[RMDB]
Chemical mapping of a 177-nucleotide RNA with DMS and 2A3. For DMS, 2,038 sequencing reads were counted. 2A3 adducts were read by reverse transcription with SuperScript II with manganese. Conditions: 150 mM KOAc, 10 mM MgCl2 and 150 mM bicine (pH 8.5), 24 C. Source: RMDB library OK1LIB, as collected in RNAgym.

RNA sequence: GGGAACGACUCGAGUAGAGUCGAAAAAGCUCGUCGACCAAGAGGUCCAUUGGGUGGGGUUGAUACGGGAAAGACGAUAUCGGGCUUUUGAUGCGAUCGUCCCCGCCCGCCCAGAGAGUGUGGGACGUGACGACUGUGUUUUCGAACACAGUCGUCAAAAAGAAACAACAACAACAAC
Reactivity to DMS in 0.01 (KOAc 150mM, MgCl2 10mM, bicine 150mM(pH8.5), 24C), signal-to-noise 1, nucleotides 027 to 126: a080g020c000u010c010g000u010c070g000a100c090c010a110a140g020a090g000g000u020c000c060a070u000u000g000g000g030u000g010g010g000g010u020u010g000a160u050a300c040g010g000g000a050a020a160g000a000c000g010a210u030a070u020c040g010g040g000c080u020u040u000u020g000a120u020g100c020g000a040u000c000g000u010c030c040c020c050g000c000c030c000g000c000c030c000a040g020a100g000a070g010u000g040u000g000g000g000a180c100g000
Reactivity to 2A3 in 0.01 (KOAc 150mM, MgCl2 10mM, bicine 150mM(pH8.5), 24C), signal-to-noise 2, nucleotides 027 to 126: a000g000c090u050c020g110u050c010g030a000c020c020a060a040g070a130g060g030u000c070c000a040u050u100g000g000g030u040g000g020g020g000u090u290g190a100u050a220c010g000g000g020a130a120a050g000a040c000g000a000u020a100u130c050g070g120g000c010u140u160u020u140g150a130u220g070c030g000a010u000c000g030u020c000c000c000c010g050c010c000c000g010c000c010c000a020g060a000g000a010g000u050g000u030g010g040g000a030c000g030